[RMDB]
RNA sequence: GGGAACGACUCGAGUAGAGUCGAAAAGAAUACUUCGGUAUUCCACCAUUCCUAAGUCUCACCCGAUGAAAGCGUAUGGAGCUGGGUGUCGGAAACGACACCAGCUAUGAAGUACGCUGGAGGGUGAGAUAUGGAUCGACCCAUGCUUCGGCAUGAACGCUAGUAGUGGAUUCGUCCACUACUAGCGAAAAGAAACAACAACAACAAC
Reactivity to DMS in 0.01 (KOAc 150mM, MgCl2 10mM, bicine 150mM(pH8.5), 24C), signal-to-noise 1, nucleotides 027 to 156: g010a040a040u000a010c000u000u000c210g100g040u000a000u000u000c000c030a160c010c050a130u010u000c000c060u020a040a230g000u000c020u000c010a010c000c010c020g000a160u030g000a220a100a040g020c040g010u000a000u000g020g020a030g000c000u000g000g020g010u000g040u000c010g030g000a150a080a100c000g020a050c000a060c020c000a010g000c010u000a110u010g010a130a260g040u000a000c010g010c030u000g000g010a170g010g020g030u000g000a000g030a000u000a020u020g010g000a020u020c080g000a130c000c010c050a160u000g000c080u000u010c150g010g030c040a140u000g000a050a170
Reactivity to 2A3 in 0.01 (KOAc 150mM, MgCl2 10mM, bicine 150mM(pH8.5), 24C), signal-to-noise 4, nucleotides 027 to 156: g000a020a010u030a020c040u080u210c300g080g000u010a010u020u000c020c020a090c010c030a040u080u040c010c010u040a100a090g010u000c010u010c010a010c000c000c000g150a210u050g010a040a000a000g000c000g010u000a000u020g030g080a020g010c000u040g040g050g190u060g000u000c010g020g040a080a030a030c000g000a000c000a000c000c000a000g000c000u030a280u090g020a010a000g000u000a000c000g010c000u000g000g010a010g000g000g000u000g000a000g000a000u000a000u010g000g010a020u060c110g090a090c000c050c010a010u010g000c000u120u100c290g100g000c020a020u120g070a130a020
This 207-nucleotide RNA was probed chemically with DMS and 2A3. Values cover nucleotides 27 to 156. The reactions ran in a buffer of 150 mM KOAc, 10 mM MgCl2 and 150 mM bicine (pH 8.5), at 24 C. Source: RMDB library RNAMAK, as collected in RNAgym. For 2A3, 3,197 sequencing reads were counted. For 2A3 the reverse transcriptase was SuperScript II with manganese. For DMS, 2,134 sequencing reads were counted.